Chemical mapping of a 177-nucleotide RNA with DMS. For DMS, 872 sequencing reads were counted. Reactivities are rounded to 0.1 and cut off at 0 and 3. Source: RMDB library OK2TRN, as collected in RNAgym.
RNA sequence: GGGAACGACUCGAGUAGAGUCGAAAAUUCAUAGGGCUGCUGGGGGGACCCAAGUGACAGAGGCCAACACUGGGUUUGAUUCCUUAAUGACCUUGAGCAGCAGUGGAGCAGGAACUCCAGCCCCAUAAUUUGCAGUACCAUUCGUGGUACUGCAAAUAAAAGAAACAACAACAACAAC
Reactivity to DMS in 0.01 (KOAc 150mM, MgCl2 10mM, bicine 150mM(pH8.5), 24C), signal-to-noise 1, nucleotides 027 to 126: u010u000c110a130u010a230g030g010g030c000u000g020c030u030g010g000g000g000g010g000a010c010c000c020a020a120g010u010g010a100c110a100g010a100g010g030c030c060a070a150c020a020c040u000g000g010g020u000u020u010g010a160u020u000c010c020u000u010a090a070u000g010a100c000c000u010u000g010a070g010c010a020g000c010a150g030u000g000g000a040g020c050a120g010g030a120a160c050u000c020c000a070g010c000c010c000c030a110u000a060